[RMDB]
RNA sequence: GGGAACGACUCGAGUAGAGUCGAAAAUCAUCUUCGGAUGACAACAAGGGGUCCUCAAUGAUGAGAAAUGGAGCCUUGUACUGAAGCCUCCACGGUACACAGGCGUUGAAAUUUCUUUGAGAGGACGGAGGCACCCACGAUCUGGUUUCGACCAGAAAAAACGAAUCUAGUUCGCUAGAUUCGUUUUAAAAGAAACAACAACAACAAC
Reactivity to DMS in 0.01 (KOAc 150mM, MgCl2 10mM, bicine 150mM(pH8.5), 24C), signal-to-noise 1, nucleotides 027 to 156: u010c010a040u000c010u000u030c300g040g020a040u010g000a020c040a090a040c090a160a090g020g000g020g020u000c010c000u000c000a150a300u000g000a100u000g000a030g000a010a010a040u000g000g000a100g030c020c020u000u000g000u010a000c010u030g010a010a110g010c010c010u000c000c000a160c020g010g000u010a010c000a030c300a030g040g060c000g010u000u020g030a100a100a030u000u000u000c030u000u000u000g000a060g040a050g020g000a000c020g010g040a090g070g020c010a020c000c010c010a090c150g000a180u000c010u000g000g000u000u000u030c220g000a070c050c000a050g000a000a020
Reactivity to 2A3 in 0.01 (KOAc 150mM, MgCl2 10mM, bicine 150mM(pH8.5), 24C), signal-to-noise 2, nucleotides 027 to 156: u020c000a010u000c000u070u060c240g110g010a010u010g020a020c040a110a050c060a160a150g150g020g040g050u030c020c010u000c030a080a300u000g000a000u000g000a000g000a000a000a000u010g020g010a010g000c000c000u000u000g000u000a010c000u030g040a200a030g000c010c000u000c000c000a020c000g000g020u000a000c030a010c070a010g020g000c020g020u110u010g010a010a000a000u000u000u000c000u010u030u030g000a010g000a000g000g000a000c000g000g000a000g000g020c000a040c010c000c000a050c060g070a120u000c000u000g010g040u050u150u170c200g100a050c010c010a000g000a080a030

The record gives the reactivity of an RNA of 207 nucleotides to DMS and 2A3. The reactions ran in a buffer of 150 mM KOAc, 10 mM MgCl2 and 150 mM bicine (pH 8.5), at 24 C. For DMS the reverse transcriptase was MarathonRT. For 2A3, 2,641 sequencing reads were counted. Reactivities are rounded to 0.1 and cut off at 0 and 3.